[RMDB]
RNA sequence: GGGAACGACUCGAGUAGAGUCGAAAAGUCGCCGCGUCGACAUCAACGCCCAGCGCGGGCGAGGGACGCGUCCUACGGGGGUGCCCCAUUCGCCGGCAUGGUAGAGGACGGCAAGAUUGCCGCGACGCCCGCGUAUAUGGUUCGCCAUAUACGCGGGAAAAGAAACAACAACAACAAC
Reactivity to DMS in 0.01 (KOAc 150mM, MgCl2 10mM, bicine 150mM(pH8.5), 24C), signal-to-noise 1, nucleotides 027 to 126: g030u000c030g030c050c120g010c040g000u000c000g000a160c140a060u000c060a030a150c090g000c160c000c030a090g000c080g010c020g000g030g000c020g030a050g000g010g000a030c000g040c010g000u000c000c000u000a080c150g060g050g000g000g010u000g000c010c010c050c000a210u000u000c000g010c050c000g040g010c020a050u000g000g000u010a110g000a120g000g010a090c040g000g030c070a100a140g000a050u010u000g040c000c100g000c000g000a020c010g000
Reactivity to 2A3 in 0.01 (KOAc 150mM, MgCl2 10mM, bicine 150mM(pH8.5), 24C), signal-to-noise 2, nucleotides 027 to 126: g050u020c010g010c020c030g050c020g000u070c020g050a060c020a060u110c030a080a060c020g050c000c040c000a060g050c300g060c100g140g020g020c000g000a040g020g010g000a050c030g000c000g130u150c000c010u010a130c150g180g000g010g000g000u000g000c000c030c000c000a100u130u160c010g010c000c000g030g030c010a020u030g000g030u080a110g050a100g040g060a020c040g000g030c030a040a040g130a220u140u290g020c000c010g030c010g030a010c010g000